RNA sequence: GGGAACGACUCGAGUAGAGUCGAAAAAAGGAAGGAAGCCCAAGGGUCUCUCCUGGCUCUGCUUCCCCAUCACUGCCUCCACUUCCCCGCAUCCCUUUCCCUGGCAGAGGCUUCUUGCCACAGGGCUAGAUAAAUCUACUUUCGAGUAGAUUUAUCUAAAAGAAACAACAACAACAAC
Reactivity to DMS in 0.01 (KOAc 150mM, MgCl2 10mM, bicine 150mM(pH8.5), 24C), signal-to-noise 7, nucleotides 027 to 126: a060a050g010g000a080a060g000g020a060a050g000c050c090c100a120a060g010g010g000u010c030u000c110u020c070c050u000g010g000c030u000c030u000g010c080u000u010c020c010c020c060a080u010c090a070c070u000g000c030c010u010c020c030a090c090u000u000c030c010c010c050g000c120a100u000c000c010c010u000u000u010c000c010c000u000g010g010c050a050g000a110g010g000c040u010u000c040u010u010g010c010c010a110c130a080g000g000g020c250u010
Reactivity to 2A3 in 0.01 (KOAc 150mM, MgCl2 10mM, bicine 150mM(pH8.5), 24C), signal-to-noise 9, nucleotides 027 to 126: a000a000g050g020a030a010g030g010a040a010g020c020c020c050a040a090g060g010g020u040c030u000c000u020c080c030u020g020g010c010u010c010u030g040c010u030u020c000c000c000c000a030u080c020a020c050u050g020c000c010u030c020c000a050c030u030u040c010c000c000c010g020c010a070u050c010c000c000u030u070u040c010c000c000u020g020g000c040a020g020a030g140g010c000u070u030c040u060u140g010c000c000a050c040a040g030g020g010c010u010